The data come from the RNA Mapping Database (RMDB), library OK3TST. An RNA of 207 nucleotides, treated with 2A3 and DMS and read out base by base. High 2A3 reactivity points to a flexible backbone, as in loops and unpaired stretches. The 2A3 profile rests on 1,609 reads. For DMS, 3,358 sequencing reads were counted. The reactions ran in a buffer of 150 mM KOAc, 10 mM MgCl2 and 150 mM bicine (pH 8.5), at 24 C.

RNA sequence: GGGAACGACUCGAGUAGAGUCGAAAACUCGAGGAGCAUAGAGGCGUGCGAGCUCGACAUGAAUCAGCCUCGAUUAGAAGGUACUCGUGAGAGCGAAGUACCGAGAAUUGGUCGACGAUCACCGGCGAUCUUCCGACCUUGAAUUAAGCCGGCAAAAAUUUACUCCAUCGUUCGCGAUGGAGUAAAUAAAAGAAACAACAACAACAAC
Reactivity to 2A3 in 0.01 (KOAc 150mM, MgCl2 10mM, bicine 150mM(pH8.5), 24C), signal-to-noise 3, nucleotides 027 to 156: c000u000c010g000a020g000g040a060g030c020a020u070a110g010a020g010g000c020g000u010g020c010g020a050g230c000u010c010g070a070c020a190u300g120a100a100u140c050a040g000c000c010u010c010g030a070u060u120a060g080a160a060g000g000u010a010c000u010c010g020u040g020a090g000a000g070c020g010a120a010g040u000a000c000c010g000a000g000a030a180u200u190g020g000u010c010g000a020c000g010a000u000c010a010c090c000g000g000c000g020a000u020c000u010u000c100c010g010a000c000c000u000u090g050a020a010u050u050a030a040g000c000c010g020g010c010a010a110a000a030
Reactivity to DMS in 0.01 (KOAc 150mM, MgCl2 10mM, bicine 150mM(pH8.5), 24C), signal-to-noise 2, nucleotides 027 to 156: c070u010c000g010a060g030g020a150g020c070a090u000a130g040a060g020g030c030g060u010g020c040g040a130g020c030u000c010g050a110c080a100u000g010a120a080u000c040a170g010c010c020u000c010g010a130u000u030a070g040a220a130g000g010u010a010c000u010c020g020u000g000a300g000a270g020c020g010a050a050g030u000a000c020c020g000a040g010a070a150u010u010g010g020u000c010g010a070c100g010a100u010c080a110c050c020g020g000c020g000a050u000c080u010u000c030c010g010a030c020c030u020u000g000a040a150u020u010a050a040g020c000c010g010g010c130a020a030a050a080